[RMDB]
Source: RMDB library OK2TST, as collected in RNAgym. Structure probing data (2A3 and DMS) for a 177-nucleotide construct. The 2A3 profile rests on 2,778 reads. The reactions ran in a buffer of 150 mM KOAc, 10 mM MgCl2 and 150 mM bicine (pH 8.5), at 24 C. Reactivities are given for positions 27 through 126.
RNA sequence: GGGAACGACUCGAGUAGAGUCGAAAAUAACCAGGACGUAGUGAUGGUUUCAGCGGCCCAGGCAGGUAUAUGUGGGGAUAGUCGAUAGUGGAUCCAUUUCCCUUCCCGACGGUCCAGUACCAGCUCAGCGUCCCUAUUAAUUCGUUAAUAGGGACGCAAAAGAAACAACAACAACAAC
Reactivity to 2A3 in 0.01 (KOAc 150mM, MgCl2 10mM, bicine 150mM(pH8.5), 24C), signal-to-noise 3, nucleotides 027 to 126: u120a020a030c000c000a000g070g060a020c100g050u140a050g080u100g200a110u040g090g040u000u090u150c070a040g010c060g070g000c000c000c010a030g070g000c030a020g000g080u060a110u030a030u160g200u090g060g050g010g030a030u050a050g030u040c030g020a040u020a030g150u160g060g010a040u060c060c030a030u090u050u070c010c000c000u010u030c040c010c010g000a010c000g000g000u000c000c010a000g000u010a010c000c000a020g010c030u050c080a010
Reactivity to DMS in 0.01 (KOAc 150mM, MgCl2 10mM, bicine 150mM(pH8.5), 24C), signal-to-noise 4, nucleotides 027 to 126: u020a080a130c020c010a090g010g010a070c050g020u010a100g010u010g000a100u010g020g010u000u010u000c080a080g000c120g000g000c060c030c030a130g010g010c000a040g020g020u000a030u020a060u020g030u020g000g010g020g000a050u000a080g020u000c020g000a050u020a050g010u010g030g010a040u000c110c200a120u000u000u000c010c000c010u010u000c150c040c000g000a080c070g010g010u000c030c020a150g000u010a060c040c010a080g000c060u000c140a160